[RMDB]
RNA sequence: GGGAACGACUCGAGUAGAGUCGAAAACAAUCGCGCAGCCCGGGCAGGCCGAGCCGCUCGCGAUGAGCGGCCUCGUGCAGCAGCUGCGCAAUGUGCGCCAGGUCUGUCAGGUCCCGUUCGCCGCCGCCAGUGCGGCCAUAUUCGUAUGGCCGCACUGAAAAGAAACAACAACAACAAC
Reactivity to 2A3 in 0.01 (KOAc 150mM, MgCl2 10mM, bicine 150mM(pH8.5), 24C), signal-to-noise 2, nucleotides 027 to 126: c010a000a090u120c060g000c000g030c010a000g010c020c020c040g020g150g020c070a090g110g060c000c000g000a000g020c010c000g000c000u000c010g100c120g260a200u240g000a000g000c020g000g010c030c010u010c000g070u110g000c010a010g010c000a010g000c000u000g000c030g000c030a010a010u020g000u030g000c030g050c020c040a050g010g070u000c020u060g050u080c020a050g000g100u040c000c020c010g010u040u050c040g040c060c010g050c040c020g020c050
Reactivity to DMS in 0.01 (KOAc 150mM, MgCl2 10mM, bicine 150mM(pH8.5), 24C), signal-to-noise 4, nucleotides 027 to 126: c070a090a060u010c140g000c010g010c010a020g000c000c150c090g000g000g020c030a120g010g020c020c010g000a050g000c000c000g010c000u000c010g030c260g010a140u020g010a010g020c000g010g010c080c030u000c020g000u000g030c000a080g030c040a300g000c020u000g000c010g020c010a020a010u000g010u000g000c050g010c030c040a080g010g010u010c030u010g010u020c070a090g020g000u000c030c030c020g000u000u000c030g010c030c040g010c040c070g000c160
This 177-nucleotide RNA was probed chemically with 2A3 and DMS.
The 2A3 profile rests on 3,347 reads.
Source: RMDB library OK2TRN, as collected in RNAgym.
2A3 is a SHAPE reagent: it acylates the 2'-hydroxyl of flexible nucleotides of all four kinds.
Conditions: 150 mM KOAc, 10 mM MgCl2 and 150 mM bicine (pH 8.5), 24 C.